[RMDB]
RNA sequence: GGGAACGACUCGAGUAGAGUCGAAAACGACAGCCAUCACAGACCAAGGUAUCGUGCCACGGCAUGUUCCACCUUGGCCAUUUGGUCACGGUCCAGAUAGUCGACCGGAUCGCCGUGCACAUAGACGGUCUUCUCACUGCUUCGGCGGUGAGAAGGCAAAAGAAACAACAACAACAAC
Reactivity to DMS in 0.01 (KOAc 150mM, MgCl2 10mM, bicine 150mM(pH8.5), 24C), signal-to-noise 7, nucleotides 027 to 126: c070g000a080c110a080g010c010c010a060u000c090a070c120a090g000a060c040c000a080a080g000g000u010a060u030c090g010u010g010c110c030a060c110g000g000c000a050u030g000u010u010c070c050a050c050c050u000u000g000g010c010c020a070u010u010u010g010g000u000c030a100c080g000g000u010c040c040a110g000a100u040a080g000u020c090g020a090c060c040g000g010a040u010c130g000c000c000g010u010g000c060a010c050a090u020a060g000a090c050g000
Reactivity to 2A3 in 0.01 (KOAc 150mM, MgCl2 10mM, bicine 150mM(pH8.5), 24C), signal-to-noise 9, nucleotides 027 to 126: c050g050a030c030a020g040c020c010a070u080c020a040c030a060g050a040c000c010a020a010g030g000u040a030u100c040g000u000g020c030c020a030c040g010g000c010a030u070g040u040u000c030c010a010c000c010u010u020g000g000c000c000a060u060u040u150g010g000u020c030a010c090g010g000u000c010c010a020g040a110u080a030g070u070c040g010a020c000c000g010g010a010u010c020g000c000c000g000u010g000c010a010c000a020u050a010g080a010c010g000